Structure probing data (2A3 and DMS) for a 207-nucleotide construct.
Conditions: 150 mM KOAc, 10 mM MgCl2 and 150 mM bicine (pH 8.5), 24 C.
For 2A3, 1,724 sequencing reads were counted.
Values cover nucleotides 27 to 156.
[RMDB]
RNA sequence: GGGAACGACUCGAGUAGAGUCGAAAAUCUGAUGUGGGCAUGUUUCUGAGCUGCCCAGUCCAAGCUGUGAGUAAUUAGUGUUGAGUUGAGCGAAGGCUUGGCUCAUGCAGGUUCUAGAGUCGGAGGGUAAUGCGUGAGGCUGGCUUCACAGAGCAGCGUGUCUAAAAGUGUUCGCACUUUUAGACACAAAAGAAACAACAACAACAAC
Reactivity to 2A3 in 0.01 (KOAc 150mM, MgCl2 10mM, bicine 150mM(pH8.5), 24C), signal-to-noise 3, nucleotides 027 to 156: u080c030u050g030a070u100g060u090g100g020g020c030a060u080g050u020u080u050c090u150g040a050g000c010u010g000c000c010c010a010g000u010c020c000a050a030g030c010u040g020u040g090a070g030u110a100a140u110u160a070g060u060g040u120u060g010a040g010u020u030g000a000g010c060g060a110a010g160g030c000u020u040g040g000c000u000c010a000u060g000c010a010g010g070u150u010c060u160a050g000a030g110u050c010g020g030a030g000g000g050u090a090a070u060g030c030g030u050g030a030g030g030c000u010g030g030c010u040u080c040a060c000a030g050a010g080c020a000g040c010
Reactivity to DMS in 0.01 (KOAc 150mM, MgCl2 10mM, bicine 150mM(pH8.5), 24C), signal-to-noise 1, nucleotides 027 to 156: u000c040u000g000a220u010g030u000g000g010g000c040a140u000g010u000u000u000c070u000g030a190g020c020u000g030c030c010c000a130g020u000c020c060a110a110g020c030u020g010u010g000a100g030u000a180a150u000u010a130g000u000g030u000u010g010a050g040u000u000g020a040g020c030g000a100a100g030g000c010u000u000g010g000c000u000c000a020u000g030c050a110g020g020u000u000c050u000a100g020a080g020u010c110g000g020a150g000g010g150u020a050a030u010g000c100g010u000g000a130g030g050c040u010g000g050c010u000u000c000a030c100a080g000a090g010c040a030g000c080